[RMDB]
RNA sequence: GGGAACGACUCGAGUAGAGUCGAAAAACAAAUGAUGAAUAACAAAGGGACUUAAUACUGAAACCAGAUGUUACAUUGUAGUGUGCUGAUGUGCGAUGAGAAGACCUGGGUUCGCCCAGGUCUUCUCCUCUAUCUGGACUUUCGAGUCCAGAUAGAGAAAAGAAACAACAACAACAAC
Reactivity to DMS in 0.01 (KOAc 150mM, MgCl2 10mM, bicine 150mM(pH8.5), 24C), signal-to-noise 2, nucleotides 027 to 126: a060c070a030a050a080u010g000a070u000g010a160a110u000a050a050c040a050a110a130g020g000g000a080c110u000u010a070a070u000a150c140u020g000a050a080a060c040c020a040g000a120u020g010u000u010a030c040a050u010u010g010u000a010g020u010g010u000g010c030u000g000a100u000g020u000g020c060g010a080u000g010a000g000a030a020g010a010c010c010u000g020g020g020u000u010c240g010c010c010c000a010g010g010u000c000u000u000c000u000c000
An RNA of 177 nucleotides, treated with DMS and read out base by base. DMS adducts were read by reverse transcription with MarathonRT. The RNA was probed in 150 mM KOAc, 10 mM MgCl2 and 150 mM bicine (pH 8.5) at 24 C. The data come from the RNA Mapping Database (RMDB), library RFMREP.